[RMDB]
RNA sequence: GGGAACGACUCGAGUAGAGUCGAAAACGGAUUAGGCGUGGAGGCGAAAGUCACCCUCCUCGCAUCGCAAGUUCGUGCUUGCUACUUACACGUAGGGCGAGGGGUGGGCGAAAGUUGCCAUGAGACCAAAAUAUGUAGUUCUUCGGAACUACAUAAAGACUACACUCUCUUUCGAGAGAGUGUAGUCAAAAGAAACAACAACAACAAC
Reactivity to DMS in 0.01 (KOAc 150mM, MgCl2 10mM, bicine 150mM(pH8.5), 24C), signal-to-noise 2, nucleotides 027 to 156: c050g020g000a170u000u000a060g020g010c030g000u000g050g020a050g040g030c070g010a080a110a120g000u000c020a100c040c000c000u020c000c010u010c010g000c000a090u030c070g020c000a020a120g000u000u000c120g050u000g010c030u000u000g050c080u000a120c050u010u000a090c070a050c170g000u000a090g010g010g020c030g010a000g000g000g000g020u020g020g040g000c010g000a070a100a190g030u000u000g050c000c020a130u000g000a140g020a190c040c010a000a060a130a200u010a010u000g020u010a010g020u000u010c000u010u010c300g070g000a010a000c000u000a000c010a000u000a010a050a100
Reactivity to 2A3 in 0.01 (KOAc 150mM, MgCl2 10mM, bicine 150mM(pH8.5), 24C), signal-to-noise 4, nucleotides 027 to 156: c040g030g070a110u120u180a090g030g000c030g010u010g020g030a030g000g030c040g080a130a050a030g070u060c040a140c040c000c000u040c000c000u010c000g000c010a020u110c050g000c000a000a020g020u160u270c100g070u250g050c000u020u000g000c030u050a070c010u110u110a040c080a000c110g110u100a110g000g070g040c050g010a050g010g010g030g020u200g000g010g000c050g030a070a030a020g070u050u050g000c010c000a030u080g030a020g020a070c030c050a010a000a030a070u060a000u010g000u000a000g000u000u000c000u020u010c080g060g010a000a000c000u000a000c000a000u010a000a000a000